An RNA of 177 nucleotides, treated with DMS and 2A3 and read out base by base. Values cover nucleotides 27 to 126. For 2A3, 973 sequencing reads were counted.

[RMDB]
RNA sequence: GGGAACGACUCGAGUAGAGUCGAAAAGCUGUAGGCCACUUCGACCACGUGUCGGGUUUUGAGGUAUUUCUCCGCGUAGAGGUCCUUCCUCACCUCCGGAUAGACGUAGAGCAGCACAAAGAGCGAGUACGAAAGAGAUCUUCGGAUCUCUUUCGUAAAAAGAAACAACAACAACAAC
Reactivity to DMS in 0.01 (KOAc 150mM, MgCl2 10mM, bicine 150mM(pH8.5), 24C), signal-to-noise 3, nucleotides 027 to 126: g010c040u000g010u010a100g020g030c050c070a090c090u020u030c010g010a030c020c020a160c250g000u010g020u000c030g000g000g010u000u000u010u010g020a080g020g020u000a110u010u000u000c040u000c000c090g000c150g040u010a110g000a060g000g010u000c080c090u000u010c110c000u010c090a070c040c020u000c010c030g010g010a100u000a070g010a080c070g020u000a040g010a080g030c030a030g000c020a130c130a040a070a100g010a090g000c080g000a110g010
Reactivity to 2A3 in 0.01 (KOAc 150mM, MgCl2 10mM, bicine 150mM(pH8.5), 24C), signal-to-noise 1, nucleotides 027 to 126: g060c040u040g000u090a050g140g000c000c040a020c010u170u120c010g010a010c000c010a150c220g140u120g020u120c000g020g060g000u040u070u070u100g070a040g010g020u080a120u030u100u000c010u020c000c000g020c070g060u060a050g000a010g040g010u060c030c020u010u030c010c000u040c000a040c010c000u020c000c030g050g070a050u060a060g120a030c040g020u030a010g000a040g060c000a000g000c010a000c050a050a080a000g080a010g050c040g010a030g060